[RMDB]
Record summary
Source: RMDB library OK1LIB, as collected in RNAgym. Structure probing data (DMS and 2A3) for a 177-nucleotide construct. The reactions ran in a buffer of 150 mM KOAc, 10 mM MgCl2 and 150 mM bicine (pH 8.5), at 24 C. DMS adducts were read by reverse transcription with MarathonRT. 2A3 adducts were read by reverse transcription with SuperScript II with manganese. For DMS, 1,498 sequencing reads were counted.
RNA sequence: GGGAACGACUCGAGUAGAGUCGAAAAAGGAAGCUUCUGGCGGCAGCGUCUCAACGAGCUCAGGCCUUUGUCAACGGGCACGUACCGGUGGUGCCAACUUAUCGUGUUCGCCCAGGCCUGUAGUUACCCCAUGCAAAGCGUUCGCGCUUUGCAUGGGAAAAGAAACAACAACAACAAC
Reactivity to DMS in 0.01 (KOAc 150mM, MgCl2 10mM, bicine 150mM(pH8.5), 24C), signal-to-noise 1, nucleotides 027 to 126: a050g010g020a100a010g040c040u000u010c070u000g030g000c060g000g000c110a070g000c040g000u000c010u020c080a100a040c030g000a090g060c030u000c020a000g000g010c040c000u020u000u000g000u020c150a260a230c000g000g040g040c040a010c000g000u000a160c140c220g000g000u000g000g020u000g000c040c010a060a070c060u000u040a190u030c060g030u040g000u000u020c000g000c110c060c100a090g000g000c010c020u020g020u080a090g060u000u010a110c070
Reactivity to 2A3 in 0.01 (KOAc 150mM, MgCl2 10mM, bicine 150mM(pH8.5), 24C), signal-to-noise 2, nucleotides 027 to 126: a000g080g000a050a000g010c010u040u000c010u050g040g020c020g030g040c010a000g000c010g050u020c000u000c030a060a040c100g040a040g020c010u010c020a000g000g000c000c000u080u050u050g140u090c030a050a030c010g000g000g020c010a010c050g010u070a060c020c080g000g000u030g020g050u110g050c030c030a030a070c050u140u130a070u180c020g020u030g010u100u040c000g040c000c010c010a010g000g000c000c020u030g020u010a030g000u050u100a110c000